[RMDB]
RNA sequence: GGGAACGACUCGAGUAGAGUCGAAAAAUGCUCAAUCCAAGCACCACAGUUAGGAUUGUGCUUUUCCUCAUCAAGUCGUGAAAUGAGGUCACGAAGCUCUCAGAGUGUGGUGUUUACUCUGUAUCAGACGCAUACCCCAAUUCGUUGGGGUAUGCGUAAAAGAAACAACAACAACAAC
Reactivity to DMS in 0.01 (KOAc 150mM, MgCl2 10mM, bicine 150mM(pH8.5), 24C), signal-to-noise 2, nucleotides 027 to 126: a050u000g000c010u010c010a020a000u010c000c000a100a110g010c160a050c040c070a030c130a110g020u010u010a120g000g020a010u000u000g010u000g000c010u000u000u000u000c000c000u000c160a080u020c160a100a100g010u000c030g000u010g000a030a060a080u020g000a100g010g000u000c010a010c020g000a080a140g000c110u000c060u010c040a040g000a030g000u000g010u000g000g030u010g010u010u000u000a070c040u000c030u000g020u010a120u000c080a120g000
Reactivity to 2A3 in 0.01 (KOAc 150mM, MgCl2 10mM, bicine 150mM(pH8.5), 24C), signal-to-noise 1, nucleotides 027 to 126: a000u130g000c010u020c010a000a020u000c010c020a030a030g020c010a000c050c000a050c040a090g130u160u190a020g010g000a000u000u010g000u020g000c000u050u010u010u000c010c000u010c000a060u060c040a020a050g190u010c000g000u000g100a040a010a120u270g040a130g070g130u050c030a010c050g000a020a030g000c000u000c000u010c030a020g020a010g000u040g050u070g060g000u060g020u050u060u030a010c000u000c000u000g020u040a080u180c030a050g050